Overview: Structure probing data (2A3 and DMS) for a 177-nucleotide construct. It was measured as part of the RMDB library OK2TST.
RNA sequence: GGGAACGACUCGAGUAGAGUCGAAAAGAAACUGUCCUGCAUAUAGAUCGCUAUGGUAGCUGAUAUAGUGCAAAACAAAAGAAGUCCACCAUCUGGCCUAGGGAUCAUAACAUAACAGAGUUGAUAGCCUUCGUAUAGACUUCGGUCUAUACGAAGGAAAAGAAACAACAACAACAAC
Reactivity to 2A3 in 0.01 (KOAc 150mM, MgCl2 10mM, bicine 150mM(pH8.5), 24C), signal-to-noise 1, nucleotides 027 to 126: g050a000a150a000c050u050g060u020c000c000u000g030c050a010u170a010u030a130g050a080u080c030g010c120u040a030u210g030g140u080a040g030c020u060g080a020u000a040u030a110g060u050g000c050a000a060a020a000c050a050a200a000a060g110a070a000g050u010c060c010a000c030c030a080u020c000u040g020g000c010c000u000a040g000g000g040a010u110c010a030u080a080a040c060a000u070a070a010c010a000g110a020g080u140u170g150a230u080a030g000
Reactivity to DMS in 0.01 (KOAc 150mM, MgCl2 10mM, bicine 150mM(pH8.5), 24C), signal-to-noise 1, nucleotides 027 to 126: g000a130a070a110c150u010g010u000c030c040u000g000c050a120u000a050u010a050g000a040u000c050g000c010u010a120u040g010g000u000a050g000c030u000g020a050u000a040u010a040g000u010g010c070a020a030a080a100c090a030a090a110a080g030a060a140g000u000c090c020a070c000c090a070u000c080u000g000g020c040c030u010a060g000g000g020a080u000c030a010u000a010a140c040a050u000a020a040c140a060g000a030g000u010u020g000a140u040a080g000